Annotation: This 177-nucleotide RNA was probed chemically with 2A3 and DMS. DMS adducts were read by reverse transcription with MarathonRT. For DMS, 1,626 sequencing reads were counted.

[RMDB]
RNA sequence: GGGAACGACUCGAGUAGAGUCGAAAAUCACGCCCUUAACGAUCGAGUGAUCGGCCUGCCGUUGGACCGCCUCAAGGACGUGCCAGAAGUUGUUCUUUGCGGGGGUGGGAUCGGGAAGGCACAGGCCACCGAGGAGUGGUUUCGACCACUCCUCGGUAAAAGAAACAACAACAACAAC
Reactivity to 2A3 in 0.01 (KOAc 150mM, MgCl2 10mM, bicine 150mM(pH8.5), 24C), signal-to-noise 2, nucleotides 027 to 126: u170c020a010c010g090c000c050c000u050u200a130a070c030g050a070u150c130g050a040g130u100g020a030u030c050g030g000c000c000u050g000c000c040g050u070u020g100g030a000c000c000g000c010c000u010c020a000a070g020g000a030c060g090u190g210c030c000a130g030a210a070g060u030u090g000u060u000c000u130u070u060g060c010g030g040g000g000g080u090g070g000g020a070u080c070g000g020g070a110a080g100g000c030a000c030a070g000g020c010c000
Reactivity to DMS in 0.01 (KOAc 150mM, MgCl2 10mM, bicine 150mM(pH8.5), 24C), signal-to-noise 1, nucleotides 027 to 126: u090c060a080c080g030c000c040c000u000u030a020a110c010g000a010u000c000g000a170g040u080g020a030u000c000g000g060c040c000u000g050c000c060g000u020u020g020g030a130c000c000g010c040c000u050c050a060a010g000g000a080c040g020u000g040c130c040a130g010a120a120g000u000u000g000u000u000c000u000u020u000g020c110g000g050g020g030g060u000g000g010g000a120u010c040g000g000g010a080a000g000g050c080a300c140a030g000g000c000c090